[RMDB]
RNA sequence: GGGAACGACUCGAGUAGAGUCGAAAAAAAAACGGCAGCAAGCCGAGCUACGCGAGCAACGCGAGCAAGUACAGCAAGUACAGCAACAUGAGCAACAUGAGCAAGUAGAGCAACUACAGCAAAAAAACGUUAAAAGAUUGUUCGCAAUCUUUUAACGAAAAGAAACAACAACAACAAC
Reactivity to 2A3 in 0.01 (KOAc 150mM, MgCl2 10mM, bicine 150mM(pH8.5), 24C), signal-to-noise 2, nucleotides 027 to 126: a010a020a000a010a000c010g040g010c040a070g050c090a160a030g000c040c000g020a000g000c020u080a110c010g000c040g030a090g200c090a130a120c030g000c010g040a020g030c040a040a050g050u050a030c020a030g020c040a090a070g010u000a030c020a020g030c010a020a060c010a060u130g020a020g000c010a000a070c010a050u060g030a010g000c030a090a000g050u040a010g050a020g020c010a040a000c020u050a020c020a040g080c080a010a020a010a040a080a100a010
Reactivity to DMS in 0.01 (KOAc 150mM, MgCl2 10mM, bicine 150mM(pH8.5), 24C), signal-to-noise 2, nucleotides 027 to 126: a040a020a060a100a080c060g010g020c050a070g040c120a050a120g010c060c000g000a070g030c040u000a070c050g000c110g000a180g000c100a090a060c060g000c040g000a080g010c030a070a030g000u020a040c040a070g010c090a070a050g010u010a030c040a070g000c030a030a040c030a020u000g010a080g000c100a060a050c090a020u000g000a070g010c040a080a040g000u000a040g000a100g000c060a030a060c030u010a030c070a060g000c080a020a000a040a060a020a020a110